[RMDB]
RNA sequence: GGGAACGACUCGAGUAGAGUCGAAAACCGCAGCGCUGCCUCUAUUAUUAUACCGUAAAUCUUUUUAAAUUCUGGAACUAAUUAUAUAGAGGAUAUGUCUCAAUUUGUUCUGCAUUAAUGCCACAGUAUUAAUGUAGCGAUUCGUCGCUACAUUAAUAAAAGAAACAACAACAACAAC
Reactivity to DMS in 0.01 (KOAc 150mM, MgCl2 10mM, bicine 150mM(pH8.5), 24C), signal-to-noise 2, nucleotides 027 to 126: c040c020g030c140a030g000c060g000c030u010g000c000c000u000c000u010a010u000u010a050u000u010a040u000a200c020c010g020u010a070a090a050u040c030u020u030u050u010u020a060a120a200u010u010c080u010g010g020a110a140c150u010a010a020u020u030a060u050a080u020a030g010a010g000g010a040u030a030u020g000u000c040u000c090a030a110u040u020u010g000u020u000c050u000g000c060a020u000u000a050a090u010g020c000c060a060c200a080g020u000
Reactivity to 2A3 in 0.01 (KOAc 150mM, MgCl2 10mM, bicine 150mM(pH8.5), 24C), signal-to-noise 5, nucleotides 027 to 126: c000c000g020c040a010g010c010g000c010u020g010c000c000u000c000u000a010u060u000a020u030u010a030u070a050c010c000g030u060a070a130a170u150c090u030u270u060u090u240a090a230a140u180u030c050u130g020g010a000a040c020u020a040a030u240u040a090u040a010u020a190g020a010g000g010a010u040a040u130g060u020c020u000c100a100a140u070u060u110g050u060u000c030u040g010c010a060u060u140a100a050u130g030c020c020a060c020a070g050u020